[RMDB]
RNA sequence: GGGAACGACUCGAGUAGAGUCGAAAAUCAGGGGAUCAGCUCUAGACCCCGACCAGUUUGUGUAGGGAUGGCCUAGUCCCCUCUUCAGCGUUAAGUCCUUGACCAGCGACAAGCUCCCCAAACUCAACCGGGUCGGCCUGCCUGAACUCCAAAGGGACAUAAAUAGUUAGUUCGCUAACUAUUUAUGAAAAGAAACAACAACAACAAC
Reactivity to 2A3 in 0.01 (KOAc 150mM, MgCl2 10mM, bicine 150mM(pH8.5), 24C), signal-to-noise 6, nucleotides 027 to 156: u130c030a020g010g000g000g020a030u040c040a020g040c020u040c060u120a130g070a220c040c050c010c000g020a040c030c010a080g080u150u300u250g090u130g030u060a040g020g000g020a060u070g040g010c010c010u040a080g030u020c010c020c000c010u010c040u060u060c020a020g000c000g080u060u090a110a050g030u040c030c040u060u120g060a110c060c040a030g030c020g070a050c050a100a010g000c010u040c010c010c000c010a030a080a040c020u020c010a000a030c030c010g000g000g020u010c000g000g030c000c000u010g000c010c010u040g050a110a090c030u030c040c000a050a060a040g040g000g000a010
Reactivity to DMS in 0.01 (KOAc 150mM, MgCl2 10mM, bicine 150mM(pH8.5), 24C), signal-to-noise 3, nucleotides 027 to 156: u010c050a100g060g020g030g010a110u000c140a130g010c040u000c100u010a110g010a130c020c000c020c030g010a070c020c050a300g030u000u010u010g040u000g070u010a070g020g020g020a080u000g020g030c200c020u010a110g010u000c010c000c000c010u000c030u010u000c080a110g010c080g020u020u000a100a180g000u010c010c030u000u000g000a150c080c060a120g020c040g010a110c080a090a120g020c030u000c000c000c010c020a080a130a130c030u000c040a080a080c060c030g000g010g000u000c020g010g010c020c030u000g000c030c000u000g020a080a060c050u020c050c040a050a160a130g010g030g030a270

This 207-nucleotide RNA was probed chemically with 2A3 and DMS. It was measured as part of the RMDB library VIROID. DMS (dimethyl sulfate) methylates the pairing face of unpaired adenines and cytosines. DMS adducts were read by reverse transcription with MarathonRT.